[RMDB]
Structure probing data (DMS and 2A3) for a 207-nucleotide construct.
For DMS the reverse transcriptase was MarathonRT.
DMS (dimethyl sulfate) methylates the pairing face of unpaired adenines and cytosines.
Values are in units of 0.01, from 0 to 300, in steps of 10.
The RNA was probed in 150 mM KOAc, 10 mM MgCl2 and 150 mM bicine (pH 8.5) at 24 C.

RNA sequence: GGGAACGACUCGAGUAGAGUCGAAAAUACAACGUGGCUCAGUCCAAUAUGACUAAAGAUUGGUUUUUGGUUCAAAUGCUUGCCCACUACAACAUUGGCUAUCAGGGGUACCACCUUCCUGAAUCUUACAAAGACAGGAUGUACUCUUUCCUGAGAAGGAAUCUUACUAAUUCGUUAGUAAGAUUCCAAAAGAAACAACAACAACAAC
Reactivity to DMS in 0.01 (KOAc 150mM, MgCl2 10mM, bicine 150mM(pH8.5), 24C), signal-to-noise 3, nucleotides 027 to 156: u000a100c050a110a060c120g000u000g010g020c030u000c050a090g020u010c010c040a100a150u010a110u000g020a120c040u010a100a120a120g020a140u000u000g000g010u000u000u010u010u010g020g030u000u000c070a050a100a060u000g000c020u000u000g030c030c010c090a100c040u000a140c040a030a040c020a070u000u000g010g020c030u000a090u010c030a080g030g000g000g030u000a040c010c040a050c040c010u000u000c020c020u000g010a050a170u000c040u000u000a120c110a090a070a100g010a270c030a020g000g010a090u010g010u000a050c070u000c060u000u000u000c020c010u020g000a160g050a130a170
Reactivity to 2A3 in 0.01 (KOAc 150mM, MgCl2 10mM, bicine 150mM(pH8.5), 24C), signal-to-noise 6, nucleotides 027 to 156: u150a040c060a060a010c100g040u050g030g000c000u030c080a030g050u030c020c010a030a020u170a110u160g090a060c040u120a070a040a080g080a110u050u080g040g000u050u070u020u050u070g050g000u050u080c040a060a080a100u090g030c040u050u090g000c010c030c000a030c040u080a040c020a120a010c020a110u050u130g040g000c010u030a030u130c030a020g030g000g000g000u000a020c010c030a050c030c040u040u050c010c000u020g040a090a060u010c020u040u110a110c080a100a110a020g020a020c000a000g020g000a010u030g030u030a050c010u010c000u070u070u020c010c020u060g030a060g060a090a020